This 177-nucleotide RNA was probed chemically with DMS and 2A3.
RNA sequence: GGGAACGACUCGAGUAGAGUCGAAAAGGAUCCUAAGUACUCUGGGUAACUGCCUCGAGAUCAGUUACCAGUGAGGAGUACUCUAUUUGUCAAAGAUCUCGAGGUUGACGGGUAGAGAAUAGGAUCGCUACUCCUUAGUAUUCGUACUAAGGAGUAGAAAAGAAACAACAACAACAAC
Reactivity to DMS in 0.01 (KOAc 150mM, MgCl2 10mM, bicine 150mM(pH8.5), 24C), signal-to-noise 9, nucleotides 027 to 126: g010g000a010u000c000c000u000a030a140g010u000a040c010u000c000u010g010g010g010u010a050a070c040u000g010c090c020u000c020g000a090g000a080u000c010a060g000u000u000a050c050c050a090g020u010g010a090g010g000a130g010u010a090c000u000c010u000a020u000u000u000g000u000c040a040a070a080g010a060u000c020u000c040g000a060g010g010u000u000g000a040c040g010g000g000u000a010g000a050g010a130a170u000a020g010g010a010u000c010g010
Reactivity to 2A3 in 0.01 (KOAc 150mM, MgCl2 10mM, bicine 150mM(pH8.5), 24C), signal-to-noise 5, nucleotides 027 to 126: g020g000a000u000c000c000u020a060a010g060u020a050c000u010c020u090g050g030g050u050a050a020c010u010g000c000c010u030c010g060a050g000a060u040c000a010g030u020u030a000c000c010a020g030u030g050a040g020g020a040g040u050a030c000u000c000u000a030u000u030u020g010u000c020a020a020a030g030a060u000c020u010c030g000a020g050g000u010u010g010a020c010g040g000g020u040a010g010a000g020a040a050u030a020g000g000a000u000c000g000
For DMS, 36,386 sequencing reads were counted.